The record gives the reactivity of an RNA of 207 nucleotides to 2A3 and DMS.
The reactions ran in a buffer of 150 mM KOAc, 10 mM MgCl2 and 150 mM bicine (pH 8.5), at 24 C.
It was measured as part of the RMDB library RNAMAK.
High DMS reactivity at an A or C suggests that its Watson-Crick edge is free.
The DMS profile rests on 6,378 reads.
As a SHAPE reagent, 2A3 marks flexible, mostly unpaired nucleotides at the ribose 2'-OH.
Values cover nucleotides 27 to 156.
RNA sequence: GGGAACGACUCGAGUAGAGUCGAAAAGACCUGUUCGCAGGUCAAACAUUCCUAAGUCCAUCUAUCUAUCUUUGUCAGCGGUGUAUCGGAAACGAUACUUCGCUUGGAUUUAAGAUAGCCGAGGAUGGAUAUGGAGCUCCAGCGGAUUCGUCCGCAAUAUGCUUAAGUGAUUCGUCACUUAAGCAUAAAAAGAAACAACAACAACAAC
Reactivity to 2A3 in 0.01 (KOAc 150mM, MgCl2 10mM, bicine 150mM(pH8.5), 24C), signal-to-noise 5, nucleotides 027 to 156: g000a010c000c000u010g030u040u070c260g040c080a000g000g010u010c010a010a020a010c060a120u110u070c000c000u030a110a030g040u000c000c000a000u010c010u030a060u010c000u000a000u000c000u010u010u020g010u010c000a000g000c000g000g000u020g000u010a000u000c010g020g040a090a040a050c000g000a000u000a010c000u040u040c000g010c000u000u050g000g010a010u110u300u120a010a000g000a000u000a000g050c080c110g210a120g040g000a000u000g000g000a000u010a020u030g000g010a010g020c060u050c090c040a040g010c000g000g000a020u080u060c160g070u020c070c010g000c000a000a030
Reactivity to DMS in 0.01 (KOAc 150mM, MgCl2 10mM, bicine 150mM(pH8.5), 24C), signal-to-noise 2, nucleotides 027 to 156: g000a000c000c010u000g010u000u010c230g100c040a040g000g030u000c000a010a000a020c040a260u000u010c020c010u010a110a220g030u000c010c000a030u010c020u000a220u010c010u010a000u000c010u010u000u010g000u000c000a050g020c000g030g000u000g020u000a020u000c020g000g000a190a140a270c010g010a020u000a000c000u000u020c000g020c000u010u010g000g020a020u000u000u000a010a020g010a020u000a010g020c250c070g010a180g030g030a030u010g000g040a040u000a020u000g000g010a060g000c040u000c020c010a170g020c000g010g000a080u000u000c070g020u000c010c000g030c010a020a090
For 2A3 the reverse transcriptase was SuperScript II with manganese.